[RMDB]
RNA sequence: GGGAACGACUCGAGUAGAGUCGAAAAUGAUCGAGAGAUCUAACGAUGUACGCGAGUCUUGUGCACCGACUCGAGCGAAAGCUCGGUCGAAAGACCGCGUACAUCGGUCGGCAAGUGUACAGUCGACGCCUGGGUAGUCAUUCGUGACUACCCAGGCAAAAGAAACAACAACAACAAC
Reactivity to DMS in 0.01 (KOAc 150mM, MgCl2 10mM, bicine 150mM(pH8.5), 24C), signal-to-noise 2, nucleotides 027 to 126: u010g000a060u000c000g010a260g010a220g000a020u000c010u000a110a300c020g010a010u000g010u000a000c000g000c000g000a110g000u000c010u030u000g020u010g030c210a230c230c020g000a000c000u020c040g030a030g000c000g000a080a090a110g020c000u000c010g040g000u000c000g000a030a030a000g000a020c000c000g000c040g010u000a000c010a000u000c010g000g030u010c040g020g030c040a090a070g040u000g010u000a080c230a110g010u010c010g000a060c100
Reactivity to 2A3 in 0.01 (KOAc 150mM, MgCl2 10mM, bicine 150mM(pH8.5), 24C), signal-to-noise 1, nucleotides 027 to 126: u090g000a000u000c010g010a000g010a000g000a130u000c010u010a080a050c030g000a000u000g010u020a000c000g010c000g060a100g040u020c040u010u050g100u150g130c110a080c090c010g010a000c050u110c230g000a000g030c000g010a090a030a010g010c010u010c020g000g010u000c000g010a000a000a000g010a000c000c000g010c030g000u000a000c000a010u000c010g020g000u010c010g000g000c040a090a220g110u120g040u140a070c030a020g010u010c000g000a000c070
Notes: This 177-nucleotide RNA was probed chemically with DMS and 2A3. The reactions ran in a buffer of 150 mM KOAc, 10 mM MgCl2 and 150 mM bicine (pH 8.5), at 24 C. For 2A3 the reverse transcriptase was SuperScript II with manganese.